Structure probing data (DMS and 2A3) for a 207-nucleotide construct. For DMS the reverse transcriptase was MarathonRT. Values cover nucleotides 27 to 156. For 2A3, 1,338 sequencing reads were counted.
RNA sequence: GGGAACGACUCGAGUAGAGUCGAAAAAGUCACCUAUUACGAUAGGUGACAUUUGAACCAGCGAACAAUACAGUUGCGAGAUUCGAGGUUUCAGUCUGAAUCAUAGUAGCCAUUACGAUGGCUACAACUCACUCCCGACUGUUCGCAGUCGGGAGAACCUAGCUCUAAGGUUCGCCUUAGAGCUAGGAAAAGAAACAACAACAACAAC
Reactivity to DMS in 0.01 (KOAc 150mM, MgCl2 10mM, bicine 150mM(pH8.5), 24C), signal-to-noise 1, nucleotides 027 to 156: a220g000u000c000a010c000c010u000a020u010u010a150c210g040a120u000a000g000g050u000g000a010c000a060u020u000u000g020a180a300c000c040a120g100c030g010a060a080c040a160a140u010a150c060a160g040u000u000g000c000g000a120g000a060u020u010c060g010a190g000g010u000u010u010c110a080g000u010c080u000g030a040a110u000c040a070u000a130g010u030a020g020c020c010a030u000u000a210c300g030a100u000g000g010c000u000a000c000a070a060c100u020c050a100c010u000c000c020c010g010a020c000u000g010u000u030c300g040c000a000g070u010c000g000g000g000a000g000a000a030
Reactivity to 2A3 in 0.01 (KOAc 150mM, MgCl2 10mM, bicine 150mM(pH8.5), 24C), signal-to-noise 2, nucleotides 027 to 156: a000g000u000c020a000c000c000u000a010u010u070a070c190g060a000u000a000g000g010u010g000a000c010a030u050u050u090g010a010a020c000c000a010g160c000g010a000a000c030a000a060u130a160c010a020g000u030u010g020c000g010a000g000a020u000u010c010g000a020g040g030u070u230u300c020a020g060u040c000u050g100a070a070u170c090a090u070a100g000u000a000g000c000c010a000u030u090a070c280g100a030u010g000g000c000u000a000c000a000a000c010u070c030a060c010u000c060c000c000g000a010c010u010g060u010u070c300g020c110a010g000u000c000g000g000g000a000g000a000a000